[RMDB]
RNA sequence: GGGAACGACUCGAGUAGAGUCGAAAAUUGAACUCCUGUCCUCAAGUGAUCCACCCACCUGAGCCUCUCAAAGUGCUGGGAUUGCAGGCGUGAGCCUCUGUGGCCAGCCAACAGACAGUUUUGCAGGACCAUUUCAAAAUAUGUCAAGUAAAUAUAACACUAAAUAAUAGUUCGCUAUUAUUUAGUGAAAAGAAACAACAACAACAAC
Reactivity to 2A3 in 0.01 (KOAc 150mM, MgCl2 10mM, bicine 150mM(pH8.5), 24C), signal-to-noise 2, nucleotides 027 to 156: u080u080g000a050a010c020u000c020c010u020g020u020c000c000u030c060a040a030g020u010g090a020u000c000c010a010c030c000c000a000c000c000u000g060a010g040c000c000u000c000u030c010a050a110a040g030u040g020c000u000g030g010g050a050u000u060g000c000a000g000g000c020g030u080g080a040g000c000c000u010c030u000g050u040g070g060c010c000a000g000c020c000a030a010c000a010g060a000c000a000g020u040u070u080u040g010c040a030g000g090a050c000c040a040u080u110u110c070a040a040a090a020u180a100u120g060u060c030a050a020g010u170a090a080a140u300a090u300a160a070
Reactivity to DMS in 0.01 (KOAc 150mM, MgCl2 10mM, bicine 150mM(pH8.5), 24C), signal-to-noise 1, nucleotides 027 to 156: u010u000g000a120a060c050u000c020c020u000g000u000c030c020u030c030a050a070g040u000g030a100u010c030c020a100c030c010c030a070c020c020u000g000a080g020c080c010u000c030u010c020a020a110a120g020u000g020c020u010g010g000g000a130u010u000g040c030a070g040g040c000g000u000g000a290g010c010c000u000c050u000g010u000g010g000c020c010a030g010c010c020a100a070c080a180g030a040c050a080g000u000u000u000u030g010c050a090g060g050a100c050c000a060u000u020u020c020a040a020a050a030u010a050u000g000u000c030a030a230g030u000a080a110a110u000a040u000a080a190
The record gives the reactivity of an RNA of 207 nucleotides to 2A3 and DMS. The reactions ran in a buffer of 150 mM KOAc, 10 mM MgCl2 and 150 mM bicine (pH 8.5), at 24 C. High 2A3 reactivity points to a flexible backbone, as in loops and unpaired stretches. Reactivities are given for positions 27 through 156.